[RMDB]
RNA sequence: GGGAACGACUCGAGUAGAGUCGAAAAAGUUCUGAUCUUCUCUCAGAUGGUGCGCUGCCUAGACAUCCUAGAGGAUUAUUUAAUCCAGAGGAGGUAAGAAAAGAGUCAUCCUAGCCUGUGGUUACUCUACGGGGUAAGAUUUCGAUCUUACCCCGUAAAAAGAAACAACAACAACAAC
Reactivity to DMS in 0.01 (KOAc 150mM, MgCl2 10mM, bicine 150mM(pH8.5), 24C), signal-to-noise 2, nucleotides 027 to 126: a130g000u010u000c030u010g000a050u000c030u000u000c020u010c050u000c090a080g010a070u020g000g020u010g010c090g010c050u010g010c060c030u000a050g000a120c160a080u000c090c030u000a090g010a110g010g000a010u000u000a170u000u010u000a050a020u000c020c010a100g020a070g000g010a010g000g000u000a040a040g010a070a040a090a120g020a080g000u000c080a080u010c010c030u000a060g020c060c050u000g010u000g000g010u000u000a030c060u020c040